[RMDB]
RNA sequence: GGGAACGACUCGAGUAGAGUCGAAAACUUGCACGACUGCAACCUGCUUUCGGAACUUUACCGUCUGCGGUACUUGUAGUGCUAUAUGAGCGUGGGCCCUCCGUGUGCGUGUAAUUUAAUUGAACUAUGGUACUGUACCAUUCGUGGUACAGUACCAAAAAGAAACAACAACAACAAC
Reactivity to 2A3 in 0.01 (KOAc 150mM, MgCl2 10mM, bicine 150mM(pH8.5), 24C), signal-to-noise 4, nucleotides 027 to 126: c000u020u060g010c020a020c040g060a010c030u000g000c010a100a130c000c000u010g000c010u020u010u030c010g000g100a110a150c040u110u160u300a110c050c000g020u010c020u000g020c000g040g000u040a040c010u000u020g010u050a020g000u020g010c020u030a030u040a060u240g180a060g020c020g010u080g000g000g000c000c000c000u080c020c000g030u020g010u020g070c060g000u020g040u090a030a250u050u140u080a110a140u080u140g120a040a010c060u060a100
Reactivity to DMS in 0.01 (KOAc 150mM, MgCl2 10mM, bicine 150mM(pH8.5), 24C), signal-to-noise 3, nucleotides 027 to 126: c120u000u020g030c040a030c040g020a080c040u020g010c040a040a070c040c020u030g020c010u020u000u000c010g020g020a150a110c160u070u020u020a060c000c030g000u000c020u030g010c040g010g010u010a040c300u000u010g020u000a030g020u030g010c030u000a110u040a070u000g000a050g000c030g030u010g020g000g000c020c030c020u000c000c040g020u000g000u020g000c070g030u000g020u000a040a030u010u010u010a100a140u000u000g000a050a060c130u000a180